RNA sequence: GGGAACGACUCGAGUAGAGUCGAAAAGAUAUGGAUAUGGAGGGACAUGCUGAAUAUCGGAAACGAUAUUCCAGCAACAGCCCUGCAUAUCCUAAGUCAAAGAGGGAGGACUUCGGUCCUCCCUCAACACUGAUAUCUAGUUCGCUAGAUAUCAGUGAAAAGAAACAACAACAACAAC
Reactivity to DMS in 0.01 (KOAc 150mM, MgCl2 10mM, bicine 150mM(pH8.5), 24C), signal-to-noise 6, nucleotides 027 to 126: g000a010u000a030u010g000g000a010u000a000u000g000g000a030g010g010g010a040c110a090u020g010c000u000g000a030a010u000a000u000c000g010g000a010a000a020c000g010a010u000a000u000u000c210c080a010g010c000a080a080c210a170g000c000c010c000u000g000c000a000u000a000u000c000c000u000a000a060g000u000c010a100a130a140g000a030g010g000g000a010g000g010a020c000u000u010c240g030g010u000c000c000u000c000c000c000u000c000a010a060
Reactivity to 2A3 in 0.01 (KOAc 150mM, MgCl2 10mM, bicine 150mM(pH8.5), 24C), signal-to-noise 4, nucleotides 027 to 126: g010a000u010a010u040g020g000a000u020a000u020g180g250a040g020g020g010a090c160a210u200g020c000u000g000a010a000u000a000u010c010g000g000a000a010a000c000g020a000u010a000u030u000c110c030a010g000c000a070a090c130a080g010c000c010c000u000g010c000a000u010a000u000c000c000u000a000a000g000u010c030a080a170a110g000a000g000g030g020a030g030g000a010c010u080u120c300g050g000u010c000c000u000c010c000c000u000c000a000a000

Source: RMDB library TTRDES, as collected in RNAgym. Structure probing data (DMS and 2A3) for a 177-nucleotide construct. For 2A3, 14,875 sequencing reads were counted. For DMS, 20,867 sequencing reads were counted.